The record gives the reactivity of an RNA of 177 nucleotides to DMS and 2A3. For DMS the reverse transcriptase was MarathonRT. The DMS profile rests on 20,347 reads. 2A3 adducts were read by reverse transcription with SuperScript II with manganese. Conditions: 150 mM KOAc, 10 mM MgCl2 and 150 mM bicine (pH 8.5), 24 C.

RNA sequence: GGGAACGACUCGAGUAGAGUCGAAAAUAUCACCAAACCCAGCAAUUUCGACAACUCCUAUGUCAGCUUACAUUGUCAUAGAUCAUCCUUCUUCAACUUCAAGCCCUUACACUCAGUAUGCUAUUGCGAUCAUAUUCCUAUUCGUAGGAAUAUGAUCAAAAGAAACAACAACAACAAC
Reactivity to DMS in 0.01 (KOAc 150mM, MgCl2 10mM, bicine 150mM(pH8.5), 24C), signal-to-noise 9, nucleotides 027 to 126: u010a100u010c080a120c050c050a060a110a130c050c020c010a110g010c080a080a090u000u000u000c060g010a060c060a080a100c090u000c050c040u000a060u000g010u000c030a070g010c090u000u000a080c160a090u010u000g010u000c040a050u000a050g000a090u010c060a050u000c030c020u000u000c030u000u000c060a040a070c070u000u000c070a060a110g000c020c010c020u000u000a070c090a070c060u000c060a070g010u000a060u000g010c060u000a150u000u000g010c300
Reactivity to 2A3 in 0.01 (KOAc 150mM, MgCl2 10mM, bicine 150mM(pH8.5), 24C), signal-to-noise 9, nucleotides 027 to 126: u020a000u020c020a020c060c010a050a040a060c020c010c000a010g030c030a060a140u040u090u110c040g030a020c020a070a030c020u030c020c010u050a050u090g030u030c010a010g020c020u050u050a040c020a100u060u100g060u060c010a030u030a070g060a050u050c010a020u020c030c000u040u060c000u060u040c020a050a050c020u060u040c040a070a030g010c020c000c000u040u070a040c060a010c040u070c010a040g050u060a090u160g020c020u050a060u130u110g040c030